[RMDB]
RNA sequence: GGGAACGACUCGAGUAGAGUCGAAAAGAAUCCGCCGUAUUGAUCGGAAGAAGGCGGGACGAUCUAUACGACUGACGAAAAAGGGCCGAAAAGCCUAGGUUCGAGGCCCCGAUCCUAGGGUCAGGAAGGUAUAGAGAAUCUUCGGAUUCUCUAUACCAAAAGAAACAACAACAACAAC
Reactivity to 2A3 in 0.01 (KOAc 150mM, MgCl2 10mM, bicine 150mM(pH8.5), 24C), signal-to-noise 7, nucleotides 027 to 126: g090a020a060u020c010c020g010c020c000g020u010a000u010u100g040a040u020c030g050g020a050a040g100a060a060g120g050c070g010g000g010a000c000g010a000u000c000u020a020u000a010c010g020a020c030u040g040a010c030g090a090a020a000a020a050g060g010g020c050c050g100a080a090a030a020g030c010c000u020a020g020g030u020u040c020g010a080g070g000c000c010c000c000g010a010u010c000c010u010a020g050g000g030u060c030a020g090g040a070a080
Reactivity to DMS in 0.01 (KOAc 150mM, MgCl2 10mM, bicine 150mM(pH8.5), 24C), signal-to-noise 5, nucleotides 027 to 126: g010a100a110u020c010c030g040c070c000g000u030a020u010u000g000a010u000c020g000g000a120a100g000a070a120g000g010c000g020g000g010a130c010g000a030u010c010u000a020u000a020c020g010a130c000u000g000a010c040g010a040a040a090a160a070g000g000g020c030c020g000a070a110a070a080g000c000c010u030a080g010g020u000u000c000g010a240g010g000c010c010c040c020g000a090u000c050c080u000a060g000g010g000u000c030a060g000g010a100a060

Annotation
The record gives the reactivity of an RNA of 177 nucleotides to 2A3 and DMS. The RNA was probed in 150 mM KOAc, 10 mM MgCl2 and 150 mM bicine (pH 8.5) at 24 C. Source: RMDB library OK1LIB, as collected in RNAgym. Values are in units of 0.01, from 0 to 300, in steps of 10. Values cover nucleotides 27 to 126.